[RMDB]
The record gives the reactivity of an RNA of 177 nucleotides to DMS and 2A3. For 2A3, 1,109 sequencing reads were counted. The RNA was probed in 150 mM KOAc, 10 mM MgCl2 and 150 mM bicine (pH 8.5) at 24 C. The DMS profile rests on 1,772 reads. DMS adducts were read by reverse transcription with MarathonRT. The data come from the RNA Mapping Database (RMDB), library M2PK50.
RNA sequence: GGGAACGACUCGAGUAGAGUCGAAAAACGCGAGGAUUCGUCCUCGCGUACAUAAGUGAGUUCGCCGCAUAGCUGCCUAAGUGAGUUCGCCGGAUAGCUGCCAAGCACAUAGUUUCGACUAUGUGAAUUUCUACGUGUGUUUCGACACACGUAGAAAAAAAGAAACAACAACAACAAC
Reactivity to DMS in 0.01 (KOAc 150mM, MgCl2 10mM, bicine 150mM(pH8.5), 24C), signal-to-noise 2, nucleotides 027 to 126: a060c000g010c000g020a010g010g000a040u000u000c210g010u000c000c000u000c010g030c000g000u000a010c120a040u010a100a060g020u000g000a100g000u000u000c040g040c040c050g020c050a080u000a080g020c030u000g010c020c020u010a050a070g010u000g010a090g020u000u000c060g030c030c030g000g000a070u010a050g000c030u000g010c050c030a080a120g010c000a000c010a000u000a000g010u000u000u010c190g020a030c000u010a000u000g010u000g010a080a090
Reactivity to 2A3 in 0.01 (KOAc 150mM, MgCl2 10mM, bicine 150mM(pH8.5), 24C), signal-to-noise 1, nucleotides 027 to 126: a000c000g020c000g000a000g000g010a010u030u000c130g080u040c040c010u000c000g030c000g010u010a000c020a020u180a010a080g050u030g110a080g000u000u100c070g030c070c020g100c050a020u040a070g000c050u070g000c040c060u100a080a110g050u040g070a080g000u000u080c040g020c070c020g000g010a040u060a030g000c020u050g050c000c010a100a030g050c000a000c000a020u020a000g000u020u080u130c260g020a010c010u000a000u020g000u020g000a010a020